[RMDB]
RNA sequence: GGGAACGACUCGAGUAGAGUCGAAAAUGAGACACCUUCGGGUGUCUCACAUUAAGCUGACCAGCUAAGAGGUCAAUAUCGUCAUGCACAAAUAGAAUAAAACAGCUUGCUCCUUCGGGAGCAAGAAACUCCUUUGAGUAUUCGUACUCAAAGGAGUAAAAGAAACAACAACAACAAC
Reactivity to 2A3 in 0.01 (KOAc 150mM, MgCl2 10mM, bicine 150mM(pH8.5), 24C), signal-to-noise 3, nucleotides 027 to 126: u070g010a000g000a000c000a000c010c010u000u020c160g090g000g000u000g000u000c000u000c010a000c000a000u050u060a080a010g000c020u010g020a010c010c020a030g060c050u100a150a080g140a090g130g020u030c030a020a040u150a080u160c090g060u040c040a060u160g060c110a020c030a080a080a040u230a200g100a120a090u150a160a060a010a040c010a010g030c000u010u010g000c000u000c010c000u050u030c120g090g030g000a000g000c000a000a000g000a000a000
Reactivity to DMS in 0.01 (KOAc 150mM, MgCl2 10mM, bicine 150mM(pH8.5), 24C), signal-to-noise 3, nucleotides 027 to 126: u000g000a010g000a010c000a000c000c000u010u020c170g050g010g030u000g020u000c000u000c010a020c100a050u000u010a080a110g010c070u000g000a080c050c020a170g010c050u010a060a090g010a130g010g000u000c020a080a070u000a070u000c080g000u000c060a070u000g030c060a040c080a060a050a070u010a070g000a090a070u000a040a060a070a070c130a130g000c000u000u010g010c000u000c000c000u000u010c200g030g010g010a000g000c000a000a010g000a050a070